The record gives the reactivity of an RNA of 177 nucleotides to DMS and 2A3. It was measured as part of the RMDB library OK2TRN.

RNA sequence: GGGAACGACUCGAGUAGAGUCGAAAAUUGAGUGGGUUUUGACUCAAGCCAAUCAUAACCUGGUUCUUUCUAGAAAUCAAGGGUUCUGGAUUCCCUUAGGAAUUAAUAACUCUAAUUCGGUGAUCCAUCGCGUAUAUAAGUUCGCUUAUAUACGCGAAAAAGAAACAACAACAACAAC
Reactivity to DMS in 0.01 (KOAc 150mM, MgCl2 10mM, bicine 150mM(pH8.5), 24C), signal-to-noise 4, nucleotides 027 to 126: u010u020g010a020g020u000g000g000g010u010u000u010u000g010a050c020u000c000a130a250g030c030c030a100a040u000c050a050u010a020a050c020c010u000g000g000u000u000c030u010u020u010c070u010a080g010a040a030a040u010c130a040a050g010g000g010u010u000c120u010g020g000a030u010u000c010c000c270u010u010a100g020g000a020a010u000u010a070a070u010a040a040c040u000c010u010a140a120u000u000c030g010g010u000g000a040u000c010c020a070
Reactivity to 2A3 in 0.01 (KOAc 150mM, MgCl2 10mM, bicine 150mM(pH8.5), 24C), signal-to-noise 4, nucleotides 027 to 126: u140u120g000a010g000u030g020g030g000u070u140u090u180g020a010c000u000c030a050a040g070c010c000a030a030u040c030a050u020a050a020c000c000u010g010g020u030u010c020u040u190u030c040u080a100g010a060a080a050u150c070a080a050g030g010g000u030u030c030u070g090g000a020u010u020c010c010c060u010u100a120g000g020a010a000u020u020a060a050u070a070a030c010u000c000u040a040a060u040u010c010g050g010u030g010a010u000c010c000a000
Reactivities are given for positions 27 through 126.